Notes:
Chemical mapping of a 207-nucleotide RNA with 2A3. The RNA was probed in 150 mM KOAc, 10 mM MgCl2 and 150 mM bicine (pH 8.5) at 24 C. For 2A3, 415 sequencing reads were counted.
RNA sequence: GGGAACGACUCGAGUAGAGUCGAAAAUUUGCCAGUUCGCUCCAGGUUUCCCCGGGGAUCCCUGAAGCGCUCCUCCGAGCCGCCUUCUUUUUUCUUUUCUGCUCAGGAGGUCAGGUGUGAACCACAGGAACCACGAGUUUAGUUCCGAGGAACCAACGCGUAGUAUAACGUUCGCGUUAUACUACGCAAAAGAAACAACAACAACAAC
Reactivity to 2A3 in 0.01 (KOAc 150mM, MgCl2 10mM, bicine 150mM(pH8.5), 24C), signal-to-noise 1, nucleotides 027 to 156: u260u200u110g090c000c000a000g120u000u000c010g000c000u000c000c040a110g000g060u000u090u130c040c060c090c090g000g000g030g060a010u000c030c020c000u000g040a050a080g230c040g110c220u010c000c010u020c010c010g000a010g040c040c050g140c110c030u200u130c100u260u300u280u080u150u070c100u110u200u100u000c010u020g000c000u000c010a100g020g020a010g000g010u010c010a010g000g010u110g030u000g230a020a000c040c010a020c030a080g000g000a000a070c000c000a000c020g000a020g000u110u090u210a000g000u010u000c010c030g000a060g020g090a070a070c080c060a060a050c070